[RMDB]
The data come from the RNA Mapping Database (RMDB), libraries RFM100 and RFMREP. Chemical mapping of a 177-nucleotide RNA with DMS and 2A3. For 2A3 the reverse transcriptase was SuperScript II with manganese. Values cover nucleotides 27 to 126. Conditions: 150 mM KOAc, 10 mM MgCl2 and 150 mM bicine (pH 8.5), 24 C.
RNA sequence: GGGAACGACUCGAGUAGAGUCGAAAAGACAGCAAAGUCCUUCACACCCAGGUCCACCCCGACCGCGCUGCCGGUCUCGGGCUGCGGUUCGGGGUCGUCGGUGUCCACGGCCAAGGUCACAUACCAGUUCCAAUCUGAUUUUCGAAUCAGAUUGGAAAAAAGAAACAACAACAACAAC
Reactivity to DMS in 0.01 (KOAc 150mM, MgCl2 10mM, bicine 150mM(pH8.5), 24C), signal-to-noise 5, nucleotides 027 to 126: g010a090c060a070g020c090a050a100a130g010u010c010c010u000u000c080a100c130a090c030c010c080a100g000g060u020c070c100a130c000c000c000c010g010a030c000c000g000c000g020c140u010g030c020c010g030g000u020c070u010c050g000g010g010c010u000g010c020g000g000u020u020c000g020g010g000g000u000c050g000u000c050g000g020u000g010u000c030c030a060c060g030g010c030c040a080a110g000g010u000c040a030c080a080u010a130c050c060a130g030
Reactivity to 2A3 in 0.01 (KOAc 150mM, MgCl2 10mM, bicine 150mM(pH8.5), 24C), signal-to-noise 4, nucleotides 027 to 126: g010a000c060a030g080c050a160a040a010g050u070c030c030u030u060c030a010c010a000c010c020c040a030g080g060u000c020c030a030c010c000c010c000g020a000c010c020g000c020g150c300u130g000c000c020g050g090u160c070u110c160g080g000g000c020u020g000c020g010g010u100u150c010g000g000g000g000u000c010g000u010c000g010g030u020g010u030c050c020a030c020g030g000c030c000a060a000g040g010u050c010a010c000a060u120a040c010c030a010g060

The 2A3 profile rests on 3,565 reads.